The record gives the reactivity of an RNA of 177 nucleotides to 2A3 and DMS. The RNA was probed in 150 mM KOAc, 10 mM MgCl2 and 150 mM bicine (pH 8.5) at 24 C.
RNA sequence: GGGAACGACUCGAGUAGAGUCGAAAAGAAAACAAGUACCGAGAACAUUGUUUUCGCUGCUUGGCGUUGCCGUUUUGUGUUGCAGUUGGUUGGGUAACGCCGCAAAUACCAACGGAAGAGAUAGAUAAAUAUCGGGAUAUUUCGAUAUCCCGAUAUUAAAAGAAACAACAACAACAAC
Reactivity to 2A3 in 0.01 (KOAc 150mM, MgCl2 10mM, bicine 150mM(pH8.5), 24C), signal-to-noise 4, nucleotides 027 to 126: g010a000a020a000a010c030a020a000g010u050a070c060c070g030a030g040a050a070c150a300u140u230g000u020u000u010u010c020g010c010u030g010c010u050u070g000g000c010g010u010u020g010c000c000g040u080u040u030u110g200u020g060u100u090g070c050a050g010u040u040g010g050u040u090g050g000g000u020a000a020c010g020c000c000g000c000a020a040a010u100a020c010c000a050a000c010g040g010a110a010g050a040g000a020u130a070g110a030u100a160
Reactivity to DMS in 0.01 (KOAc 150mM, MgCl2 10mM, bicine 150mM(pH8.5), 24C), signal-to-noise 7, nucleotides 027 to 126: g000a060a030a100a090c040a010a010g020u000a060c290c020g000a070g000a040a020c020a170u020u020g000u000u000u000u000c000g020c210u010g000c010u010u000g000g010c010g000u000u000g000c000c010g010u030u020u000u000g020u000g010u000u000g000c080a120g010u000u010g000g000u000u010g000g000g020u000a020a060c180g000c000c010g010c100a030a060a090u030a070c010c020a030a040c020g000g010a060a050g000a060g000a120u030a080g010a100u010a050
The 2A3 profile rests on 2,127 reads.